This 177-nucleotide RNA was probed chemically with 2A3 and DMS. The data come from the RNA Mapping Database (RMDB), libraries RFM100 and RFMREP. The reactions ran in a buffer of 150 mM KOAc, 10 mM MgCl2 and 150 mM bicine (pH 8.5), at 24 C.
[RMDB]
RNA sequence: GGGAACGACUCGAGUAGAGUCGAAAAGGGUGAAAUGAAAGGAAGAAGAAAAACUCAGCAUUCUUUCCUCUGACAAAGAGUAAAACGACAAGGAAUAUCGGCCUGAAUUCUCUUCCCAAGAAGAAAGACUUAUUCAAUGCUUCGGCAUUGAAUAAGUAAAAGAAACAACAACAACAAC
Reactivity to 2A3 in 0.01 (KOAc 150mM, MgCl2 10mM, bicine 150mM(pH8.5), 24C), signal-to-noise 4, nucleotides 027 to 126: g020g000g020u060g040a060a070a120u160g040a080a090a040g030g010a020a040g030a030a020g050a050a150a020a020a010c080u070c070a020g030c030a070u020u010c010u030u030u010c000c030u000c010u020g040a090c140a120a100a000g020a000g020u120a020a020a020a050c080g080a040c090a090a040g010g010a070a030u110a040u170c050g050g020c020c000u010g010a030a050u050u000c050u000c000u000u020c000c010c000a020a050g070a020a010g070a020a080a010g080
Reactivity to DMS in 0.01 (KOAc 150mM, MgCl2 10mM, bicine 150mM(pH8.5), 24C), signal-to-noise 4, nucleotides 027 to 126: g010g000g010u000g000a040a070a060u060g010a060a090a090g010g000a040a020g000a090a050g030a050a090a080a100a140c150u010c070a060g020c090a160u000u000c010u000u010u000c060c010u000c010u000g000a100c190a080a070a050g000a060g010u010a040a020a030a130c110g010a040c170a060a040g000g000a060a080u010a070u000c110g000g020c040c000u000g000a090a070u000u000c030u010c030u000u010c010c000c010a130a090g000a080a040g020a080a090a090g000